[RMDB]
RNA sequence: GGGAACGACUCGAGUAGAGUCGAAAACGAGAGCGAUUCGUCGCUCUCGAAAGAGAGCACGGCAGCACAAGAAAAGCCGAAGAAAAGCAGAGCCGACUGCAAAAACUCCCAUGUUCGCAUGGGAGAAGAGCAGAUAUAACUUCGGUUAUAUCUGCUCAAAAGAAACAACAACAACAAC
Reactivity to DMS in 0.01 (KOAc 150mM, MgCl2 10mM, bicine 150mM(pH8.5), 24C), signal-to-noise 2, nucleotides 027 to 126: c020g000a030g000a020g000c010g010a040u010u040c160g030u000c000g020c000u000c000u020c000g000a020a090a090g010a210g000a050g010c080a090c040g000g030c000a130g000c050a110c050a070a140g000a060a080a110a170g020c020c020g000a080a110g000a070a090a110a110g000c010a030g000a130g010c090c130g040a140c040u000g040c020a050a050a030a090a120c010u000c000c000c010a000u000g000u000u010c250g000c000a010u010g010g000g000a040g000a000a020
Reactivity to 2A3 in 0.01 (KOAc 150mM, MgCl2 10mM, bicine 150mM(pH8.5), 24C), signal-to-noise 2, nucleotides 027 to 126: c000g000a010g000a000g010c020g030a060u020u070c180g040u010c000g090c000u000c000u030c000g000a000a010a000g050a010g010a000g000c030a010c100g000g000c010a030g080c050a050c070a180a030g100a060a190a020a020g030c010c040g030a080a010g040a050a170a030a010g000c010a000g010a020g010c040c070g110a080c050u020g000c030a000a060a040a040a190c010u000c000c020c000a000u000g030u040u030c220g000c080a000u000g000g000g000a000g000a000a010